[RMDB]
RNA sequence: GGGAACGACUCGAGUAGAGUCGAAAAGCCUCCUCGCUUCCACAGAAAGGGGACGGGGCAGAUCGCAAGUGCUACAACCGAGCGGUGGUAUCUGUCAAACUAAGCAGCCACUGCACAUCAAUUGACUAAACGAUGCCGAUCUUCGGAUCGGCAUCAAGCACGACUAAAAGUUCGCUUUUAGUCGUGCAAAAGAAACAACAACAACAAC
Reactivity to 2A3 in 0.01 (KOAc 150mM, MgCl2 10mM, bicine 150mM(pH8.5), 24C), signal-to-noise 1, nucleotides 027 to 156: g070c010c000u010c000c000u030c010g080c100u050u000c070c000a050c000a130g180a110a200a120g010g020g000g040a010c020g000g000g000g010c050a040g000a040u050c090g000c000a040a070g000u010g010c010u070a060c080a150a020c010c170g090a050g050c000g020g000u000g000g030u030a020u020c000u000g110u040c030a060a060a010c050u130a050a050g010c010a010g010c000c000a000c000u000g080c000a000c000a050u220c060a020a250u150u120g100a120c030u110a110a190a000c070g010a000u060g010c000c000g000a000u010c000u060u060c080g130g000a000u000c010g000g000c000a000u010c000a000a010